[RMDB]
RNA sequence: GGGAACGACUCGAGUAGAGUCGAAAAGCCAGACGUAACUUUUUCGCCAACGUUAGCCAUGAGUUGCGUACGCCCUUGACGGUAUUGCAAGGCUAUCUGGAAAUGAUGCAGGAACAGGCGCUGGAAGCCAGCUACGAGGGUUCGCCCUCGUAGCUGGAAAAGAAACAACAACAACAAC
Reactivity to DMS in 0.01 (KOAc 150mM, MgCl2 10mM, bicine 150mM(pH8.5), 24C), signal-to-noise 1, nucleotides 027 to 126: g020c090c100a100g000a150c060g040u000a030a030c000u000u000u010u000u030c120g010c040c090a070a160c030g000u000u000a000g000c070c070a060u000g000a000g130u000u000g000c070g160u000a040c060g000c090c060c030u000u020g010a040c300g000g020u070a050u000u020g000c000a050a110g030g080c030u000a000u070c040u000g040g090a130a150a090u000g000a000u000g080c000a080g000g000a130a080c250a060g000g000c070g000c000u020g000g030a140a100g000
Reactivity to 2A3 in 0.01 (KOAc 150mM, MgCl2 10mM, bicine 150mM(pH8.5), 24C), signal-to-noise 1, nucleotides 027 to 126: g010c000c020a010g060a080c020g000u030a060a080c010u020u010u020u110u130c040g000c010c000a110a120c190g040u090u100a000g000c000c070a140u150g020a060g150u020u000g010c030g010u030a060c040g070c000c000c060u030u120g070a080c100g030g040u090a030u110u180g000c010a030a070g010g000c010u050a080u050c030u020g010g010a060a060a050u170g040a060u190g050c000a030g000g010a040a030c000a000g030g000c070g020c050u000g110g000a060a030g070
The record gives the reactivity of an RNA of 177 nucleotides to DMS and 2A3. DMS adducts were read by reverse transcription with MarathonRT. 2A3 adducts were read by reverse transcription with SuperScript II with manganese. As a SHAPE reagent, 2A3 marks flexible, mostly unpaired nucleotides at the ribose 2'-OH. The DMS profile rests on 907 reads.